Conditions: 150 mM KOAc, 10 mM MgCl2 and 150 mM bicine (pH 8.5), 24 C. Chemical mapping of a 177-nucleotide RNA with 2A3 and DMS. For 2A3, 14,383 sequencing reads were counted. Reactivities are given for positions 27 through 126. The data come from the RNA Mapping Database (RMDB), library OK2TST.
[RMDB]
RNA sequence: GGGAACGACUCGAGUAGAGUCGAAAACGCCGCGGUCCCAUCGGCGCCGUUGCCGAUCAGCGGACGGUUCAACAGCGCCAGGGUGGGCGCGUUGAUGACGUCGAAUAGCGGCUGCAAGGGGCCAAAGGUACCGACUUAAAUUCGUUUAAGUCGGUACAAAAGAAACAACAACAACAAC
Reactivity to 2A3 in 0.01 (KOAc 150mM, MgCl2 10mM, bicine 150mM(pH8.5), 24C), signal-to-noise 7, nucleotides 027 to 126: c050g030c010c010g010c050g010g030u030c010c010c010a040u080c040g020g000c010g030c020c060g150u100u150g020c010c020g050a160u080c060a030g300c050g100g000a000c000g010g000u040u030c010a020a020c040a090g010c000g000c010c030a070g270g070g110u300g120g040g000c000g000c000g000u000u020g030a050u070g130a070c010g010u040c010g010a060a040u100a140g040c040g040g000c020u040g010c020a090a100g000g000g000g020c000c000a080a040a000g090
Reactivity to DMS in 0.01 (KOAc 150mM, MgCl2 10mM, bicine 150mM(pH8.5), 24C), signal-to-noise 8, nucleotides 027 to 126: c130g010c020c010g010c110g010g010u000c000c000c010a120u000c040g010g010c000g020c060c130g010u000u000g020c020c020g010a080u010c130a110g010c110g010g010a060c010g010g000u000u000c020a010a010c000a090g030c000g010c000c010a190g010g030g020u010g020g000g010c010g020c000g000u010u000g010a050u010g010a070c020g010u000c020g010a090a130u010a150g010c030g000g010c010u010g010c110a120a080g000g000g000g010c080c050a060a100a090g010